[RMDB]
RNA sequence: GGGAACGACUCGAGUAGAGUCGAAAAAUGACAGGUUACACAUUACCAAGUUCUGCAUCUGCUUCUUCAACUCCAAAUGUGCUUGAAACACACAAUAUGAACUUUGUUCCAAGUACCAGUACUGUUACGACUCAUAGCGCUUCGGCGCUAUGAGUCGAAAAGAAACAACAACAACAAC
Reactivity to 2A3 in 0.01 (KOAc 150mM, MgCl2 10mM, bicine 150mM(pH8.5), 24C), signal-to-noise 2, nucleotides 027 to 126: a030u150g030a020c030a040g140g060u050u100a000c030a000c000a020u030u250a040c000c000a060a000g000u040u080c010u000g010c000a040u060c030u140g070c000u050u040c000u080u040c040a070a160c080u000c000c000a040a040a280u080g040u000g000c000u000u000g030a000a050a050c030a000c000a000c030a120a110u080a150u220g140a060a150c120u000u120u080g000u000u000c000c020a030a000g030u030a030c040c000a020g050u000a040c090u020g020u200u030a040